[RMDB]
RNA sequence: GGGAACGACUCGAGUAGAGUCGAAAAUAUAUUCUGGCUAAAGGGCCGUUACAAGUAGGAGAUUCAGUUCUCUUGCAAGGCCAUUCUCUAGCUAAGAAUAUCCUGCAUGUCGUAGGCCCAGAUGCCCUAACGAGGGUGUUCGCACCCUCGAAAAGAAACAACAACAACAAC
Reactivity to 2A3 in 0.01 (KOAc 150mM, MgCl2 10mM, bicine 150mM(pH8.5), 24C), signal-to-noise 8, nucleotides 027 to 129: u130a000u000a010u020u020c000u020g000g000c000u010a030a000a030g010g000g000c020c020g030u090u170a060c080a150a080g020u020a000g030g000a010g000a020u060u130c030a080g300u130u000c000u000c000u010u010g020c010a050a090g000g000c010c010a030u300u020c040u000c010u030a000g020c010u040a140a030g000a000a000u000a000u000c000c000u000g050c030a030u230g100u260c090g020u020a030g010g000c000c000c000a020g020a050u120g030c000c000c000u040a080a030
Reactivity to DMS in 0.01 (KOAc 150mM, MgCl2 10mM, bicine 150mM(pH8.5), 24C), signal-to-noise 3, nucleotides 027 to 129: u080a090u000a020u000u000c010u030g000g040c000u010a020a130a070g000g000g000c000c000g050u010u010a140c150a130a110g020u030a040g000g030a100g000a060u000u030c300a000g060u030u000c010u000c000u000u000g020c030a070a050g010g050c000c020a140u080u050c000u020c050u010a000g050c010u010a020a010g010a010a000u010a000u030c030c000u000g030c020a000u000g030u050c150g020u020a040g050g000c060c050c010a080g030a010u050g000c000c000c000u030a070a100